[RMDB]
RNA sequence: GGGAACGACUCGAGUAGAGUCGAAAACCAUUCAUUAUACCUUGAGUAUUGCUGAAUUCAGUUUAGCGUGCAUGCUCUUGGCUAUUCUCAUAGUGAUUGUCAAAUUUGGAGUUACUUAUUCGUCAAUAAAACACUACCACGUUCGCGUGGUAGUGAAGAGUUUAUAUAUGUUCGCAUAUAUAAACUCAAAAGAAACAACAACAACAAC
Reactivity to DMS in 0.01 (KOAc 150mM, MgCl2 10mM, bicine 150mM(pH8.5), 24C), signal-to-noise 3, nucleotides 027 to 156: c020c010a190u010u000c030a100u000u000a090u020a050c020c020u000u000g010a030g030u000a040u010u000g020c030u000g020a140a080u000u000c150a190g020u000u000u000a090g040c060g060u000g040c120a160u000g000c000u000c000u000u000g010g020c030u000a080u000u000c080u000c070a130u000a070g010u020g010a030u000u000g010u010c020a060a060a210u000u010u000g000g000a200g010u000u010a110c090u010u010a120u010u000c080g020u000c080a040a110u010a040a090a110a200c020a020c000u000a000c000c010a000c010g030u000u010c300g050c000g050u000g000g000u000a000g000u000g010a010a060
Reactivity to 2A3 in 0.01 (KOAc 150mM, MgCl2 10mM, bicine 150mM(pH8.5), 24C), signal-to-noise 5, nucleotides 027 to 156: c000c000a000u000u080c010a010u020u170a070u060a130c000c000u010u040g000a000g010u020a050u150u160g000c010u030g050a160a110u190u180c090a190g180u080u090u180a060g020c070g050u060g040c020a000u010g000c000u000c000u010u010g010g000c000u090a070u150u120c110u000c080a070u080a070g040u050g090a090u040u130g090u120c080a020a110a170u140u100u170g080g010a070g050u110u070a070c040u100u120a080u210u130c040g090u040c090a100a110u090a160a120a000a020c000a000c010u000a000c000c000a000c000g020u030u040c150g010c000g080u000g010g000u000a000g000u000g000a000a010
Structure probing data (DMS and 2A3) for a 207-nucleotide construct. The DMS profile rests on 4,734 reads. The reactions ran in a buffer of 150 mM KOAc, 10 mM MgCl2 and 150 mM bicine (pH 8.5), at 24 C. For 2A3, 2,319 sequencing reads were counted. Reactivities are rounded to 0.1 and cut off at 0 and 3.